RNA sequence: GGGAACGACUCGAGUAGAGUCGAAAAUUGACAUUAAGGAUGAUUGUGAAACGUCUACACGCUGGUUGACAUUUAGGGUGAUUGUGAAACCUCGACACGGUGGUUGAGAUUAAGGAUGAUUGUGAAACGUCUGCACGCUGGUUGACAUUAAGGAUGAGCUAGAGAUUUGGUUCGCCAAAUCUCUAGCAAAAGAAACAACAACAACAAC
Reactivity to 2A3 in 0.01 (KOAc 150mM, MgCl2 10mM, bicine 150mM(pH8.5), 24C), signal-to-noise 1, nucleotides 027 to 156: u080u040g050a030c030a010u130u120a010a040g070g000a050u080g010a020u000u120g130u020g130a130a020a000c040g010u000c000u040a000c080a070c090g020c070u060g020g020u070u020g000a000c000a080u100u080u160a070g000g000g020u010g000a120u000u100g030u000g000a090a060a040c020c030u080c110g040a010c050a010c060g010g060u010g010g070u000u100g060a010g000a020u150u070a100a000g080g000a020u000g080a120u040u150g010u000g100a020a020a000c020g040u010c040u050g030c060a010c040g000c030u010g000g040u000u060g000a000c000a070u060u090a000a060g040g010a040u060g010a010
Chemical mapping of a 207-nucleotide RNA with 2A3. For 2A3, 595 sequencing reads were counted. Reactivities are given for positions 27 through 156.